RNA sequence: GGGAACGACUCGAGUAGAGUCGAAAACUUCCCCAAGGGUAGGUGGAACGCCAGGGAACAAGGAAAUAGGAGAAGGAACGGUAGAAAAGAGCGAGCCCUCCGAUCCGAUGGGGCCCUGGACCCCUCAGAAUCCCAUAGUUCGCUAUGGGAAAAAGAAACAACAACAACAAC
Reactivity to DMS in 0.01 (KOAc 150mM, MgCl2 10mM, bicine 150mM(pH8.5), 24C), signal-to-noise 9, nucleotides 027 to 129: c200u020u010c030c000c000c120a140a090g020g030g010u010a020g000g000u040g000g010a100a070c190g020c020c010a000g010g020g020a130a050c070a090a140g010g010a040a070a090u060a070g000g000a030g040a090a060g020g000a040a050c040g000g000u040a050g040a080a090a110a110g020a050g060c020g010a050g000c030c000c000u040c020c000g000a070u000c040c030g000a110u060g000g000g000g000c000c000c000u010g000g010a080c010c010c000c010u000c050a090g030a120a120
Reactivity to 2A3 in 0.01 (KOAc 150mM, MgCl2 10mM, bicine 150mM(pH8.5), 24C), signal-to-noise 9, nucleotides 027 to 129: c010u020u020c000c000c000c020a070a080g070g020g060u110a020g010g120u150g080g030a110a030c070g040c030c010a000g000g000g010a030a040c030a060a040g040g050a050a100a030u170a120g010g040a030g030a100a110g040g010a070a030c050g020g030u130a060g160a070a170a070a010g100a030g050c030g010a010g000c010c000c000u000c010c010g010a030u000c000c000g020a040u120g020g010g040g000c000c000c000u000g010g010a010c000c000c000c000u020c010a020g040a040a050
Structure probing data (DMS and 2A3) for a 170-nucleotide construct. It was measured as part of the RMDB library 15KLIB. The reactions ran in a buffer of 150 mM KOAc, 10 mM MgCl2 and 150 mM bicine (pH 8.5), at 24 C.